[RMDB]
RNA sequence: GGGAACGACUCGAGUAGAGUCGAAAAGUGAUAGGAAAGGGUGGCCCCACACCAGGACCAGUACAUAUGCAGAAAUUCCGUCCAAAGUACUUCAAGGGUCUAGGACAGUGCUGUCCAGUACAACUUUCUGUCACAUUGAAAAUGUUCUGCAUGGCCAAAAUUUAAAUACGUUCGCGUAUUUAAAUUUAAAAGAAACAACAACAACAAC
Reactivity to 2A3 in 0.01 (KOAc 150mM, MgCl2 10mM, bicine 150mM(pH8.5), 24C), signal-to-noise 3, nucleotides 027 to 156: g010u010g000a010u090a100g090g060a030a020a050g070g010g000u010g020g070c010c020c050c020a050c000a010c010c010a010g000g010a010c040c030a020g000u030a010c030a060u170a020u120g010c010a010g070a060a050a040u210u030c070c050g030u000c010c000a050a110a030g060u080a070c000u030u200c090a070a100g180g000g020u010c020u070a040g010g010a000c020a010g030u030g050c050u000g000u040c010c010a030g040u140a040c040a100a070c040u010u000u000c000u000g010u020c000a010c030a030u040u070g020a070a080a030a060u110g030u040u020c020u040g000c020a040u030g060g000c070c060a030
Reactivity to DMS in 0.01 (KOAc 150mM, MgCl2 10mM, bicine 150mM(pH8.5), 24C), signal-to-noise 2, nucleotides 027 to 156: g000u000g000a090u000a060g030g000a070a050a050g010g010g000u000g010g010c050c010c000c050a090c100a110c110c070a150g040g010a020c010c020a150g020u000a070c050a180u000a080u010g010c020a050g020a030a060a140u010u000c050c030g020u000c030c010a070a150a120g000u010a010c030u000u000c080a150a140g000g030g020u000c030u020a300g000g010a040c010a050g030u000g010c060u000g020u010c050c080a130g000u010a030c030a070a060c020u010u000u000c010u000g010u010c010a040c020a170u000u010g000a070a050a070a110u010g030u000u010c030u000g020c000a010u000g000g020c030c050a000
Chemical mapping of a 207-nucleotide RNA with 2A3 and DMS. The RNA was probed in 150 mM KOAc, 10 mM MgCl2 and 150 mM bicine (pH 8.5) at 24 C. Reactivities are given for positions 27 through 156. 2A3 adducts were read by reverse transcription with SuperScript II with manganese. For DMS, 4,346 sequencing reads were counted.